[RMDB]
RNA sequence: GGGAACGACUCGAGUAGAGUCGAAAAAGACGUCUACGGACGUCAUGUGCAUCGUGGUCAAAUGCUCAGACUCCUUGGUGGCUGCUUAUGCACCACGGAUGUUUGAGCAUGUGCUAUGGUGUCUAAACUACGCCUUAUGGUUCGCCAUAAGGCGUAGAAAAGAAACAACAACAACAAC
Reactivity to DMS in 0.01 (KOAc 150mM, MgCl2 10mM, bicine 150mM(pH8.5), 24C), signal-to-noise 3, nucleotides 027 to 126: a060g000a000c000g030u000c000u000a140c170g040g000a010c000g030u010c000a010u010g020u020g020c000a010u000c020g000u000g010g010u010c170a030a090a010u010g000c000u000c000a000g000a000c000u000c000c000u010u010g000g000u000g000g030c020u000g010c300u020u040a090u010g010c010a030c000c000a000c030g000g010a010u060g010u000u000u000g000a000g010c000a000u000g000u020g010c010u010a020u000g020g010u010g010u000c050u010a040a120a150
Reactivity to 2A3 in 0.01 (KOAc 150mM, MgCl2 10mM, bicine 150mM(pH8.5), 24C), signal-to-noise 6, nucleotides 027 to 126: a000g010a000c000g000u010c010u040a040c240g090g010a000c010g010u000c010a030u090g050u080g000c010a010u010c010g010u010g000g050u220c040a170a200a010u000g000c000u000c010a000g000a010c000u000c010c000u010u020g010g010u060g080g190c020u050g010c080u290u180a150u300g000c000a000c010c000a000c000g010g010a100u300g010u010u000u000g000a000g010c000a000u000g000u010g000c010u020a010u020g000g020u000g020u010c040u050a050a050a010